[RMDB]
RNA sequence: GGGAACGACUCGAGUAGAGUCGAAAAAGAGUCUGGGGACCCCCGUUGGGAAGCGAAGACCCUGUGGAGCUUUACUGCAGCCUGCCGUUGCUCCACAGCUGGGGGUGCGCAGGGUAGGCGGGAGGCUGUGGGAUAGAUAAUUCGUUAUCUAUCCCACAAAAGAAACAACAACAACAAC
Reactivity to DMS in 0.01 (KOAc 150mM, MgCl2 10mM, bicine 150mM(pH8.5), 24C), signal-to-noise 5, nucleotides 027 to 126: a070g010a120g010u010c030u000g010g010g000g000a100c020c010c000c010c010g050u010u020g010g000g000a070a050g020c220g020a140a120g000a090c010c040c000u010g010u000g000g000a020g000c000u010u030u030a040c070u010g010c020a110g020c150c090u010g010c000c060g010u000u000g000c010u000c000c000a000c000a000g000c150u020g010g020g000g000g030u000g010c090g000c040a060g000g010g010u020a060g000g000c100g000g010g010a090g000g010c110u030
Reactivity to 2A3 in 0.01 (KOAc 150mM, MgCl2 10mM, bicine 150mM(pH8.5), 24C), signal-to-noise 7, nucleotides 027 to 126: a010g090a020g030u050c040u040g010g000g030g080a040c000c000c000c000c010g080u120u110g040g020g030a080a040g090c060g100a070a030g090a090c000c000c000u000g000u000g000g000a010g010c020u130u130u170a040c030u060g010c010a050g150c030c120u140g010c010c020g010u020u040g000c000u000c000c000a000c000a000g010c030u030g000g000g000g020g000u020g020c040g010c020a010g000g010g050u110a040g010g040c050g010g000g000a030g060g010c050u040